Source: RMDB library OK1LIB, as collected in RNAgym. The record gives the reactivity of an RNA of 177 nucleotides to 2A3 and DMS. For DMS, 6,597 sequencing reads were counted. For 2A3, 3,430 sequencing reads were counted. The reactions ran in a buffer of 150 mM KOAc, 10 mM MgCl2 and 150 mM bicine (pH 8.5), at 24 C.

[RMDB]
RNA sequence: GGGAACGACUCGAGUAGAGUCGAAAAAAGAUACAUGACAGCUGCGCAGCAUCACUUCACGCGCUGUCAUCGGAUGUCUAGAACAUUCCUUCUAAGAAUAGCCACUGAAGAGUCUAUAAAGACGAAACAUGUGCACAGUAUUCGUACUGUGCACAUGAAAAGAAACAACAACAACAAC
Reactivity to 2A3 in 0.01 (KOAc 150mM, MgCl2 10mM, bicine 150mM(pH8.5), 24C), signal-to-noise 5, nucleotides 027 to 126: a000a000g030a010u050a050c040a010u000g000a000c000a000g010c010u270g000c030g030c020a120g060c020a130u180c090a060c100u130u090c100a010c040g000c000g000c000u000g000u010c000a000u010c010g000g030a050u080g030u010c020u050a030g030a060a010c040a050u030u040c010c000u040u050c060u100a070a010g030a040a050u040a080g030c030c010a080c040u060g040a070a030g060a040g060u020c010u020a140u070a170a160a050g030a020c030g040a030a080a010
Reactivity to DMS in 0.01 (KOAc 150mM, MgCl2 10mM, bicine 150mM(pH8.5), 24C), signal-to-noise 5, nucleotides 027 to 126: a100a010g000a000u020a020c040a000u000g000a000c010a000g020c010u050g020c010g020c170a130g000c190a180u020c230a080c130u000u000c140a260c020g020c010g010c000u000g020u000c010a000u000c130g000g070a210u000g000u000c000u000a090g010a040a100c300a220u000u010c000c000u000u020c080u000a070a120g000a080a060u010a060g020c070c020a050c080u000g000a060a050g020a150g010u000c010u010a100u010a050a050a070g000a040c070g000a160a110a090